[RMDB]
RNA sequence: GGGAACGACUCGAGUAGAGUCGAAAAGAUAUGGAUCAGGGUAUUUGCGAAGAACUCGGAAACGAGGGAGCAACUACCUGAUCCUAAGUCAAACGCCAUAUUACAGCUUCGGCUGUAAUAUGGCGAAGUAAUGAACGAUCUUCGGAUCGUUCAUUACAAAAGAAACAACAACAACAAC
Reactivity to 2A3 in 0.01 (KOAc 150mM, MgCl2 10mM, bicine 150mM(pH8.5), 24C), signal-to-noise 2, nucleotides 027 to 126: g030a030u070a030u120g000g000a000u010c030a010g220g070g050u150a050u060u040u010g030c090g140a300a020g040a090a040c000u010c000g000g040a100a060a040c000g000a000g000g010g000a030g000c010a000a000c000u010a010c000c000u010g020a000u030c000c000u000a030a020g040u000c020a130a010a100c030g000c010c000a000u000a000u010u000a000c000a000g000c000u090u160c300g150g030c020u000g000u000a000a000u000a000u000g000g020c000g000a010a000
Reactivity to DMS in 0.01 (KOAc 150mM, MgCl2 10mM, bicine 150mM(pH8.5), 24C), signal-to-noise 2, nucleotides 027 to 126: g020a030u010a300u010g000g010a020u020c010a020g000g000g000u020a010u000u000u000g000c010g000a080a150g000a080a150c020u000c000g000g000a120a050a180c010g000a010g010g000g000a110g010c000a010a010c060u010a050c000c000u000g000a000u010c000c000u000a000a080g010u000c050a090a070a210c030g010c000c010a010u000a020u000u000a000c000a000g020c010u010u020c210g010g000c000u000g010u010a000a010u010a000u000g010g000c000g000a000a030